[RMDB]
RNA sequence: GGGAACGACUCGAGUAGAGUCGAAAAACGAAAACUACGCACUCGCAGCUUAAUAACCUGCGCUGUGCCCUUCUCCCCCAGCUUGCCUGUGUCCUAGGGAAUUGGAAGGUCAUCCUUCACAGGAUCGUCUAGGUAAUCCCUUUCGAGGGAUUACCAAGUUUUGUUUCGAAUUCGUUCGAAACAAAACAAAAGAAACAACAACAACAAC
Reactivity to DMS in 0.01 (KOAc 150mM, MgCl2 10mM, bicine 150mM(pH8.5), 24C), signal-to-noise 1, nucleotides 027 to 156: a130c070g020a090a000a040a020c050u000a110c070g000c010a060c020u000c020g000c000a020g050c010u000u000a120a140u020a150a110c300c000u000g030c010g060c090u000g000u000g000c000c080c010u000u000c050u010c050c010c010c000c030a130g000c070u000u000g050c030c030u000g000u010g000u000c050c090u000a120g010g010g040a100a160u000u030g050g000a080a010g020g040u020c080a130u000c010c020u000u000c120a140c050a080g010g020a040u010c050g030u000c050u020a060g000g010u010a010a030u000c000c000c010u000u010u000c290g030a030g000g010g010a010u000u000a010c020c000a000a060
Reactivity to 2A3 in 0.01 (KOAc 150mM, MgCl2 10mM, bicine 150mM(pH8.5), 24C), signal-to-noise 2, nucleotides 027 to 156: a010c030g040a000a000a020a080c100u230a070c100g000c000a000c000u020c000g000c000a000g000c020u070u050a040a000u010a050a040c000c000u010g000c010g000c190u010g000u000g000c000c000c000u080u030c050u130c030c000c000c010c000a000g020c040u080u150g000c000c000u010g000u010g010u030c000c050u020a030g000g020g050a020a080u120u110g050g030a020a030g050g030u080c010a060u100c010c020u080u070c010a030c000a020g010g030a030u080c060g050u020c150u080a100g000g000u000a000a000u020c000c000c010u040u040u040c080g080a010g000g010g010a000u000u000a000c010c000a000a000